[RMDB]
RNA sequence: GGGAACGACUCGAGUAGAGUCGAAAAAUAGCACACAAUUCUGGAGCCAUUGCUGGGAAUCCUGAGAGAGGCAGGGAGUGAGUGCAAACUGCUUAGGGUAAAGACUGUGCUUACAGAUCCGCUACACUUUAACAUGUUAAGAUAAAGGCCCUCAGAAGUUUUAAAAUCAGUUCGCUGAUUUUAAAACAAAAGAAACAACAACAACAAC
Reactivity to 2A3 in 0.01 (KOAc 150mM, MgCl2 10mM, bicine 150mM(pH8.5), 24C), signal-to-noise 1, nucleotides 027 to 156: a000u090a000g000c030a050c020a010c000a070a240u250u000c020u060g160g000a060g000c000c020a030u050u110g050c010u000g040g000g060a050a110u080c010c010u000g010a040g000a000g000a030g090g020c000a000g050g000g010a110g050u070g030a080g010u100g050c000a000a080a070c000u040g080c000u050u150a060g000g000g060u240a170a130a020g020a030c030u020g000u030g110c000u030u040a030c000a000g040a040u020c010c040g000c080u140a010c100a000c020u100u080u040a070a030c010a090u190g100u100u090a010a010g110a010u210a230a100a100g020g000c070c000c030u060c010a010g010a130a010

Structure probing data (2A3) for a 207-nucleotide construct. It was measured as part of the RMDB library OK3TST. The reactions ran in a buffer of 150 mM KOAc, 10 mM MgCl2 and 150 mM bicine (pH 8.5), at 24 C.